[RMDB]
RNA sequence: GGGAACGACUCGAGUAGAGUCGAAAAGAUAUGGAAGUGCCUUCUUUGAUCGUCCAGGGUACCUCCCCACCUAGCUCGGAAACGAGCUAGAGGGUACCCUGGACGGGAGAAGAUACUUCCUAAGUCAUCAUGUCACUAAGUUCGCUUAGUGACAUGAAAAAGAAACAACAACAACAAC
Reactivity to 2A3 in 0.01 (KOAc 150mM, MgCl2 10mM, bicine 150mM(pH8.5), 24C), signal-to-noise 2, nucleotides 027 to 126: g050a030u130a100u300g000g010a020a020g020u000g060c010c030u090u000c020u300u300u110g230a240u220c020g000u000c000c000a000g000g000g010u000a010c000c030u060c050c010c010c010a040c010c010u000a010g030c030u000c000g020g030a100a150a080c000g020a000g010c000u000a000g000a010g020g000g000u000a000c000c030c000u000g020g000a000c000g010g010g000a000g010a000a010g010a000u000a000c000u000u010c000c000u020a230a020g150u020c010a060
Reactivity to DMS in 0.01 (KOAc 150mM, MgCl2 10mM, bicine 150mM(pH8.5), 24C), signal-to-noise 3, nucleotides 027 to 126: g010a070u000a300u000g000g010a000a010g030u010g020c030c010u000u010c000u000u000u010g000a110u010c000g020u000c000c020a000g000g010g000u000a000c000c000u000c060c040c000c030a300c060c000u000a010g010c000u000c000g010g010a140a140a220c010g000a030g000c000u010a010g000a070g000g000g000u000a000c000c000c010u000g000g010a000c010g000g010g000a020g020a030a000g010a030u000a010c010u000u000c000c000u010a030a100g000u010c080a200